[RMDB]
Structure probing data (2A3 and DMS) for a 177-nucleotide construct. For DMS, 3,290 sequencing reads were counted. The RNA was probed in 150 mM KOAc, 10 mM MgCl2 and 150 mM bicine (pH 8.5) at 24 C. The data come from the RNA Mapping Database (RMDB), library RFMREP.
RNA sequence: GGGAACGACUCGAGUAGAGUCGAAAACUCGACCAGUUUCGACUGGUCGAGCCAUCCGUCACCUGACACGGCCAAACCAGGAACCGCCGCGGCCCGGCGGGGACUAUCUAACGUUCGCGUUAGAUAGAGAUAAUCAGACUUUCGAGUCUGAUUAUCUAAAAGAAACAACAACAACAAC
Reactivity to 2A3 in 0.01 (KOAc 150mM, MgCl2 10mM, bicine 150mM(pH8.5), 24C), signal-to-noise 3, nucleotides 027 to 126: c000u000c000g000a000c000c000a010g000u040u070u110c180g120a020c010u010g000g000u010c000g010a000g000c000c010a080u000c010c010g110u080c030a080c030c030u030g060a030c020a020c100g030g000c030c030a100a050a030c030c000a010g070g040a090a090c000c010g030c010c000g040c060g050g060c000c020c010g020g000c000g000g010g000g010a010c000u010a010u030c000u000a000a000c000g020u050u040c260g010c000g090u000u020a000g000a000u010a000g010
Reactivity to DMS in 0.01 (KOAc 150mM, MgCl2 10mM, bicine 150mM(pH8.5), 24C), signal-to-noise 3, nucleotides 027 to 126: c000u000c000g000a010c000c010a000g010u000u000u010c180g020a030c000u000g000g000u000c000g000a000g020c040c060a100u000c020c010g020u000c050a090c060c040u000g000a140c080a050c030g020g000c040c060a040a090a120c080c030a050g000g010a220a170c020c020g010c000c000g010c110g010g010c170c060c010g000g000c000g010g000g000g010a300c000u000a000u000c000u000a000a010c000g010u010u010c180g020c010g000u000u000a000g000a010u000a010g000